[RMDB]
Conditions: 150 mM KOAc, 10 mM MgCl2 and 150 mM bicine (pH 8.5), 24 C. Chemical mapping of a 207-nucleotide RNA with 2A3 and DMS. For DMS, 1,616 sequencing reads were counted.
RNA sequence: GGGAACGACUCGAGUAGAGUCGAAAAGAUCAAGGCCGCGGAGAAGAAGACCGGUGAGGCCGAGCCGGUCGAGCGUGUGCCCCGGGCCAAGGCGCGCGAGAUGUACGCCGAGUACGUCUAUCGGCAGUACCUCGACGCUGAGGACGCGUGCCGCGGGAAGGUGACGAUUAUUCGUAAUCGUCACCUUAAAAGAAACAACAACAACAAC
Reactivity to 2A3 in 0.01 (KOAc 150mM, MgCl2 10mM, bicine 150mM(pH8.5), 24C), signal-to-noise 2, nucleotides 027 to 156: g070a070u240c050a030a010g110g010c010c000g010c030g050g000a100g020a150a010g040a100a010g000a020c000c000g000g030u040g020a080g050g140c080c040g010a000g000c000c000g000g000u000c000g020a020g030c060g010u090g090u180g100c000c030c020c000g070g070g000c020c010a000a000g010g000c010g010c090g000c000g010a000g000a030u230g010u040a000c010g000c020c020g020a010g010u090a050c180g090u080c070u080a110u010c000g000g030c090a040g000u000a000c010c000u000c010g030a020c010g000c010u010g000a010g040g020a030c000g020c000g000u020g080c020c000g040c020g000g000g010
Reactivity to DMS in 0.01 (KOAc 150mM, MgCl2 10mM, bicine 150mM(pH8.5), 24C), signal-to-noise 1, nucleotides 027 to 156: g000a180u010c090a160a120g020g020c020c000g000c030g030g000a150g020a070a130g020a080a160g020a000c020c010g020g070u000g020a050g010g020c150c010g040a280g000c000c020g020g000u000c050g000a080g010c050g020u000g020u000g000c020c040c000c040g030g020g010c000c010a130a300g050g000c020g020c020g000c030g000a020g010a050u000g020u000a050c020g000c050c060g030a030g000u020a060c110g010u000c070u000a060u000c030g030g090c000a140g050u040a010c070c000u000c000g000a040c000g000c000u010g020a300g090g000a060c000g000c080g030u000g040c040c010g000c000g020g010g000